[RMDB]
RNA sequence: GGGAACGACUCGAGUAGAGUCGAAAAAGUUUUGCGCGGCGAAUUGUAGUCUAUAGAGGCGUGAUCAGUGUGGGCGCUUGGGGCAAGUUCCUUGGAAGAGGACAGCAUGGAGGGUGAUACUCCCGUUGUUAACUCUAGCAUUCGUGCUAGAGUUAACAAAAGAAACAACAACAACAAC
Reactivity to DMS in 0.01 (KOAc 150mM, MgCl2 10mM, bicine 150mM(pH8.5), 24C), signal-to-noise 3, nucleotides 027 to 126: a100g000u010u030u010u030g000c010g010c060g000g010c040g030a060a100u010u000g030u000a070g010u010c030u010a150u030a090g020a090g020g000c050g050u030g030a090u010c080a050g000u040g010u010g010g020g000c080g000c030u020u020g000g000g000g000c060a070a070g010u030u020c030c030u000u020g000g020a150a100g010a060g000g010a040c090a070g020c110a040u000g000g000a030g010g000g010u010g020a090u020a040c090u000c030c000c100g000u020u010
Reactivity to 2A3 in 0.01 (KOAc 150mM, MgCl2 10mM, bicine 150mM(pH8.5), 24C), signal-to-noise 3, nucleotides 027 to 126: a000g000u010u030u080u140g030c010g000c010g020g000c020g030a020a020u020u080g050u120a080g030u000c020u020a150u000a070g160a010g030g000c050g010u060g020a070u080c020a030g030u000g010u040g130g050g000c000g000c020u020u070g040g000g000g000c010a020a060g060u130u090c010c000u030u050g080g000a080a050g020a010g020g010a010c020a000g040c020a010u070g040g050a010g040g010g000u040g020a020u030a110c020u010c000c000c030g010u030u020